[RMDB]
RNA sequence: GGGAACGACUCGAGUAGAGUCGAAAAUAAUGCGAUGGCAGCUGCUAAGAUGAUAACUUUGAACAAGGCACUGAUUAACAUCAAAGGUUAUCGUUUAACAAAUCCUAGUGAUGGUUAUUUUGGCCUAGUAUUCUGCCCUGUUCGCAGGGCAGAAUACAAAAGAAACAACAACAACAAC
Reactivity to 2A3 in 0.01 (KOAc 150mM, MgCl2 10mM, bicine 150mM(pH8.5), 24C), signal-to-noise 1, nucleotides 027 to 126: u110a010a020u110g030c010g030a060u030g060g020c010a000g010c040u070g040c020u050a050a000g020a100u080g020a000u000a040a030c020u010u100u030g050a090a070c100a110a120g120g040c060a010c050u010g060a130u110u100a040a030c020a050u060c070a050a020a000g050g000u050u000a020u060c070g000u040u070u030a030a040c020a020a140a010u000c020c020u050a060g020u050g120a110u080g070g010u120u000a130u080u090u130u060g070g000c000c020u000a090
Reactivity to DMS in 0.01 (KOAc 150mM, MgCl2 10mM, bicine 150mM(pH8.5), 24C), signal-to-noise 2, nucleotides 027 to 126: u000a050a110u010g010c020g030a090u000g010g010c050a080g000c170u010g000c050u000a070a130g010a060u000g010a000u000a020a050c000u010u000u000g000a040a130c110a090a160g000g000c110a070c140u020g000a100u000u000a090a090c300a060u000c040a080a080a040g020g020u000u000a010u010c030g010u000u000u010a090a090c120a030a120a060u000c030c000u000a070g010u000g000a050u000g010g010u000u000a020u010u010u000u010g000g010c020c030u000a060
Source information: Structure probing data (2A3 and DMS) for a 177-nucleotide construct. For DMS, 1,113 sequencing reads were counted. It was measured as part of the RMDB library OK2TRN. DMS adducts were read by reverse transcription with MarathonRT. The reactions ran in a buffer of 150 mM KOAc, 10 mM MgCl2 and 150 mM bicine (pH 8.5), at 24 C.